[RMDB]
RNA sequence: GGGAACGACUCGAGUAGAGUCGAAAAGAUCAAUUAUGAUUGCAAUGUAAUAUGUCAAGGCAGACAUAUCUAGCUGUCGCCUUAGCUAGAGAUAGCCGUUUUAUUGCUUUCAUAAGAUCGGCAAGAAGGGCUAUCAUUAUUUCGAUAAUGAUAGCCCAAAAGAAACAACAACAACAAC
Reactivity to DMS in 0.01 (KOAc 150mM, MgCl2 10mM, bicine 150mM(pH8.5), 24C), signal-to-noise 2, nucleotides 027 to 126: g000a020u010c030a120a150u000u000a000u000g000a020u000u000g010c010a010a010u010g010u010a040a040u010a060u000g010u000c150a060a040g020g000c040a140g040a020c020a050u020a080u000c120u000a060g000c110u000g000u010c060g000c080c050u000u000a040g000c030u000a020g000a160g000a150u000a020g020c010c020g010u000u000u010u010a030u000u010g010c000u000u010u000c000a000u010a000a040g000a020u000c000g010g020c230a080a080g000a130a070
Reactivity to 2A3 in 0.01 (KOAc 150mM, MgCl2 10mM, bicine 150mM(pH8.5), 24C), signal-to-noise 2, nucleotides 027 to 126: g000a000u040c030a010a240u050u000a010u010g000a010u000u020g010c000a000a020u020g030u220a070a010u040a060u190g120u120c070a050a000g050g000c050a040g030a050c000a050u140a090u040c080u090a030g080c040u020g030u070c050g100c020c030u040u040a050g010c000u000a000g000a000g010a070u020a020g010c000c010g010u020u040u030u030a020u030u010g000c000u000u000u000c010a040u010a000a030g050a020u000c000g010g000c030a070a030g120a150a090